[RMDB]
Description
An RNA of 207 nucleotides, treated with DMS and 2A3 and read out base by base. Reactivities are given for positions 27 through 156. For DMS, 2,644 sequencing reads were counted. The reactions ran in a buffer of 150 mM KOAc, 10 mM MgCl2 and 150 mM bicine (pH 8.5), at 24 C.
RNA sequence: GGGAACGACUCGAGUAGAGUCGAAAACAUCUUUCCUCCUUACACAGUGACUCCAGCUUGGGAGGGGCAGGGCUAGGCUGAGCCAGCACUCCCUGUGGUGUCUGCCUGCCACGUGCAGCUCUGGAGUAAAACCUGGAGAAGUUCGCUUCUCCAGGAACUAAUUUUCAGGGUUCGCCCUGAAAAUUAGAAAAGAAACAACAACAACAAC
Reactivity to DMS in 0.01 (KOAc 150mM, MgCl2 10mM, bicine 150mM(pH8.5), 24C), signal-to-noise 1, nucleotides 027 to 156: c020a080u000c080u000u000u000c010c040u000c020c020u000u000a180c070a130c150a130g020u000g000a060c020u000c000c010a100g000c070u000u010g040g030g000a010g020g000g030g000c080a080g020g000g010c040u010a080g020g020c040u000g030a270g000c040c010a100g010c020a100c020u000c040c050c030u030g000u010g010g020u000g020u000c040u000g000c050c000u000g010c000c060a080c060g040u020g050c030a070g000c040u000c010u010g000g010a060g050u000a030a050a090a170c000c000u000g000g000a050g000a070a060g000u010u010c290g020c030u000u000c010u010c010c020a010g000g000a000a050
Reactivity to 2A3 in 0.01 (KOAc 150mM, MgCl2 10mM, bicine 150mM(pH8.5), 24C), signal-to-noise 3, nucleotides 027 to 156: c030a050u060c060u100u110u050c000c010u030c010c010u120u170a050c120a010c030a140g070u050g110a030c000u000c000c000a000g030c050u060u080g010g000g020a010g000g000g020g000c000a040g000g000g040c040u270a010g040g030c030u070g040a030g150c060c010a010g030c030a020c030u080c000c000c010u040g030u030g010g020u030g080u010c010u010g030c000c010u020g030c010c000a130c130g110u130g000c010a030g000c020u010c010u050g000g000a000g000u020a000a040a010a010c000c000u000g000g000a010g010a000a000g020u040u180c200g020c120u000u000c000u000c000c000a000g000g000a000a000